Chemical mapping of a 207-nucleotide RNA with 2A3. The 2A3 profile rests on 311 reads.
RNA sequence: GGGAACGACUCGAGUAGAGUCGAAAAAGGUCAUUCAUGCACAUUCAAAGUCAGAGACACUGCCCCAACACCUCACUUUAGAGUGAGAAAACUUAACAGGUUUAAGCAACUUGCAGAAGAUGACACAACUGACCAGCGACAGUCUGUCUUCUAGUCAGAUACGAGUCUCGUUCGCGAGACUCGUAUCAAAAGAAACAACAACAACAAC
Reactivity to 2A3 in 0.01 (KOAc 150mM, MgCl2 10mM, bicine 150mM(pH8.5), 24C), signal-to-noise 1, nucleotides 027 to 156: a030g030g000u010c010a010u190u000c000a010u060g120c060a010c000a100u130u220c270a100a060a100g100u220c030a070g020a000g000a150c010a030c220u000g040c000c000c000c000a010a010c060a030c050c000u010c050a060c020u070u110u150a220g020a060g100u080g000a020g070a050a020a000a000c090u170u250a030a030c030a080g110g000u020u010u140a030a000g010c000a050a000c020u080u190g000c140a020g000a070a000g020a010u020g050a060c070a000c050a190a000c030u050g070a070c020c090a030g070c030g050a020c020a030g010u080c000u080g030u020c020u010u030c000u010a020g150u090c020a000
Conditions: 150 mM KOAc, 10 mM MgCl2 and 150 mM bicine (pH 8.5), 24 C.